[RMDB]
RNA sequence: GGGAACGACUCGAGUAGAGUCGAAAAAACUCGCACAUUUACCAAAGAGGAAGGUCCCAGUACUGCAGGGAUCUUAGCAGUACUGGGACCUACCUCUUUGGUCAUUACAGCCUGUUCGCAGGCUGUAGUUGUGUAAUGAGUUCGCUCAUUACACAACAAAAGAAACAACAACAACAAC
Reactivity to DMS in 0.01 (KOAc 150mM, MgCl2 10mM, bicine 150mM(pH8.5), 24C), signal-to-noise 3, nucleotides 027 to 126: a100a070c030u000c020g020c260a100c200a110u010u010u010a050c000c000a010a010a010g000a010g000g010a160a010g010g010u000c000c000c000a000g010u000a000c000u000g020c010a100g000g020g020a130u020c080u010u010a050g010c010a010g020u000a000c010u010g000g000g000a000c000c000u000a000c000c000u010c000u000u000u000g000g000u000c230a010u000u000a020c000a010g010c000c000u000g000u010u020c210g020c000a010g000g000c000u000g010u000a000

The record gives the reactivity of an RNA of 177 nucleotides to DMS. It was measured as part of the RMDB library RFMREP. The RNA was probed in 150 mM KOAc, 10 mM MgCl2 and 150 mM bicine (pH 8.5) at 24 C. The DMS profile rests on 3,633 reads.